[RMDB]
RNA sequence: GGGAACGACUCGAGUAGAGUCGAAAAACAGUAAAACUGUAAGCAGGGAAGAGAUCAUCCAUAUGUGCUGUGCUAUUCAGAGAAUAUCAAACCUUUAUGCAAUAAUGGUGAAGAUCUAAUUAUAAAGGCUGUGCACAUGCUACUGAAGGAUAAAAGAGCUAAUCAUUUACUUCGGUAAAUGAUUAGCAAAAGAAACAACAACAACAAC
Reactivity to DMS in 0.01 (KOAc 150mM, MgCl2 10mM, bicine 150mM(pH8.5), 24C), signal-to-noise 2, nucleotides 027 to 156: a050c000a080g000u010a040a040a070a300c050u000g010u010a060a180g000c020a070g030g020g000a050a070g010a080g010a110u010c060a100u010c020c020a130u010a110u000g020u010g030c030u000g000u000g000c000u010a120u000u000c050a120g000a160g000a070a090u020a060u000c020a090a080a050c000c000u010u000u000a010u000g020c120a130a060u010a050a090u000g000g010u010g010a130a180g000a040u000c020u000a070a080u030u000a060u000a030a020a050g020g020c010u000g020u000g020c020a020c030a030u000g020c000u010a100c020u000g000a090a130g000g000a070u000a050a050a060a100g010a230
Reactivity to 2A3 in 0.01 (KOAc 150mM, MgCl2 10mM, bicine 150mM(pH8.5), 24C), signal-to-noise 6, nucleotides 027 to 156: a000c010a010g030u070a030a070a050a120c010u010g030u080a050a030g050c030a040g050g050g050a070a040g040a040g020a120u090c030a010u010c040c000a050u060a010u230g030u010g000c020u010g010u000g000c020u070a070u120u110c040a020g040a010g060a190a060u100a030u180c060a040a030a100c000c000u030u040u060a060u100g070c060a070a130u080a120a070u100g010g030u050g030a050a020g020a040u030c010u080a070a070u180u100a070u070a100a040a010g040g000c020u020g020u020g030c010a000c010a030u200g010c000u040a040c010u010g030a100a030g000g010a000u060a030a090a010a010g090a010
The data come from the RNA Mapping Database (RMDB), library OK3TST. This 207-nucleotide RNA was probed chemically with DMS and 2A3. As a SHAPE reagent, 2A3 marks flexible, mostly unpaired nucleotides at the ribose 2'-OH. The 2A3 profile rests on 4,250 reads. The RNA was probed in 150 mM KOAc, 10 mM MgCl2 and 150 mM bicine (pH 8.5) at 24 C. For DMS the reverse transcriptase was MarathonRT.